[RMDB]
RNA sequence: GGGAACGACUCGAGUAGAGUCGAAAAACACGGCCAACGACAUCUUCCGUGACCCGUCCUGGCGCAAACGCGACGCCAACGGGGCGCUGCGGGUCAGCGUCGAAGACGCCCAGGCCCUGGGACUGGCCUAUCUCCUGGAGUUCGCUCCAGGAGAUAGAAAAGAAACAACAACAACAAC
Reactivity to DMS in 0.01 (KOAc 150mM, MgCl2 10mM, bicine 150mM(pH8.5), 24C), signal-to-noise 5, nucleotides 027 to 126: a110c100a070c210g000g000c030c040a070a140c130g010a120c140a100u010c040u000u010c040c020g010u000g000a110c000c010c000g020u010c100c160u000g000g050c030g000c050a040a060a150c130g000c120g010a180c070g000c020c030a100a090c090g010g000g030g000c040g000c030u000g010c050g020g020g000u010c040a070g010c070g010u010c060g000a070a050g010a050c070g000c010c070c050a160g010g000c020c020c090u000g000g000g000a300c060u000g010g000c160
Reactivity to 2A3 in 0.01 (KOAc 150mM, MgCl2 10mM, bicine 150mM(pH8.5), 24C), signal-to-noise 8, nucleotides 027 to 126: a000c090a030c030g030g000c030c020a100a050c070g090a050c040a110u020c030u090u020c010c010g020u020g040a030c000c000c000g030u090c010c070u070g020g010c000g000c050a120a180a100c100g050c070g150a120c040g030c020c010a050a060c030g000g010g040g000c030g010c010u080g010c040g030g020g050u060c030a050g060c020g030u060c050g060a060a030g030a010c020g030c010c010c010a040g060g020c000c000c010u030g010g000g030a040c020u020g030g000c000
Chemical mapping of a 177-nucleotide RNA with DMS and 2A3. The RNA was probed in 150 mM KOAc, 10 mM MgCl2 and 150 mM bicine (pH 8.5) at 24 C. The DMS profile rests on 8,295 reads.